[RMDB]
RNA sequence: GGGAACGACUCGAGUAGAGUCGAAAAUGUACCGCGUCUACUUCGACCAGUGGGGAAUCACGUACUCCCAGUACUUGGUCCUAUUGCUGCUAUGGGAAAAAGAUCGCCAGACCAUCAGCGAACUGUCCAGUGAUCACUGGUUCGCCAGUGAUCACUGAAAAGAAACAACAACAACAAC
Reactivity to DMS in 0.01 (KOAc 150mM, MgCl2 10mM, bicine 150mM(pH8.5), 24C), signal-to-noise 2, nucleotides 027 to 126: u000g000u000a220c020c110g040c120g010u000c030u000a080c080u010u000c060g000a080c080c030a040g010u030g020g020g000g010a070a060u000c040a080c100g000u000a020c050u060c040c040c000a230g000u000a010c010u000u010g000g030u010c030c030u000a080u010u000g000c030u000g000c190u010a100u000g000g030g020a030a080a110a080a060g000a030u000c040g010c020c050a120g020a150c070c010a080u000c050a080g010c010g000a050a070c140u000g010u000c050
Reactivity to 2A3 in 0.01 (KOAc 150mM, MgCl2 10mM, bicine 150mM(pH8.5), 24C), signal-to-noise 2, nucleotides 027 to 126: u150g020u030a050c020c030g000c010g040u010c070u110a150c070u070u060c060g070a050c030c040a010g050u090g040g020g040g050a030a110u100c050a030c090g000u020a020c020u000c020c010c000a000g020u000a010c000u010u050g000g030u000c000c030u130a180u090u150g000c000u010g000c020u100a080u120g000g030g080a000a080a000a100a040g080a100u130c050g080c080c010a000g050a070c000c030a050u170c010a000g040c020g040a050a020c010u050g030u110c080